[RMDB]
An RNA of 177 nucleotides, treated with DMS and 2A3 and read out base by base. For 2A3, 3,455 sequencing reads were counted. High DMS reactivity at an A or C suggests that its Watson-Crick edge is free. It was measured as part of the RMDB library TTRDEL. DMS adducts were read by reverse transcription with MarathonRT.

RNA sequence: GGGAACGACUCGAGUAGAGUCGAAAAGAUAUGGACCCAGGGAGUCUACUGGUCGGAAACGACCAUUAGACUUUGAUCUGGUGUCCUAAGUCAAAUCAUUUGUCUAGGUUCGCCUAGACAAAUGAAACCAUCAUCAGUACUUCGGUACUGAUGAUGGAAAAGAAACAACAACAACAAC
Reactivity to DMS in 0.01 (KOAc 150mM, MgCl2 10mM, bicine 150mM(pH8.5), 24C), signal-to-noise 2, nucleotides 027 to 126: g000a050u010a300u010g000g000a010c000c010c000a010g000g000g000a010g020u000c000u000a020c050u000g020g000u020c000g000g000a060a090a120c010g010a010c000c000a000u000u000a000g000a010c040u000u000u000g000a080u030c000u000g010g000u020g010u000c000c010u000a010a080g010u010c020a120a120a190u000c010a000u010u000u000g010u010c000u000a010g000g000u000u040c240g010c010c000u000a000g010a000c000a000a000a000u000g010a010a120a140
Reactivity to 2A3 in 0.01 (KOAc 150mM, MgCl2 10mM, bicine 150mM(pH8.5), 24C), signal-to-noise 1, nucleotides 027 to 126: g020a000u080a050u120g030g000a010c000c000c000a010g040g010g000a020g030u030c010u000a000c030u020g010g000u020c010g040g010a090a070a050c040g010a000c050c000a000u000u000a000g000a000c000u000u040u020g020a010u000c000u000g090g000u230g010u100c000c000u030a100a010g020u010c050a000a050a220u030c020a010u000u020u000g010u010c000u000a000g050g010u010u080c300g100c060c000u000a000g000a000c010a000a010a000u000g000a020a000a000